[RMDB]
RNA sequence: GGGAACGACUCGAGUAGAGUCGAAAAUGAUAGUUCGCUAUCACAGUAACCUUUGUGUAGAGGAGGUGUCACUUGGAUUUAAGCCUCCCAUUGGGAGGCUUUGUCAGUGAUCCCUCUACCCACCUACACUCUGGUAUUCACGACAGUUCGCUGUCAAGUUCUACUUUGACUUCGGUCAAAGUAGAACAAAAGAAACAACAACAACAAC
Reactivity to 2A3 in 0.01 (KOAc 150mM, MgCl2 10mM, bicine 150mM(pH8.5), 24C), signal-to-noise 1, nucleotides 027 to 156: u100g010a000u020a010g030u080u070c280g010c070u030a030u000c040a030c060a050g160u080a020a070c000c000u020u010u010g000u000g000u000a000g000a020g000g030a000g000g000u020g040u000c000a000c000u030u070g080g010a020u120u140u150a020a010g000c000c010u000c010c010c010a050u110u230g000g000g000a000g040g000c020u000u000u000g010u010c000a000g000u000g000a000u000c010c000c000u000c000u000a000c000c000c000a030c000c010u000a000c000a000c000u010c000u000g010g020u010a120u110u210c170a120c090g020a020c000a000g030u050u090c130g040c130u000g000u000c030a010a040
Chemical mapping of a 207-nucleotide RNA with 2A3. Conditions: 150 mM KOAc, 10 mM MgCl2 and 150 mM bicine (pH 8.5), 24 C. Values cover nucleotides 27 to 156. It was measured as part of the RMDB library RNAMAK. For 2A3, 1,612 sequencing reads were counted. For 2A3 the reverse transcriptase was SuperScript II with manganese.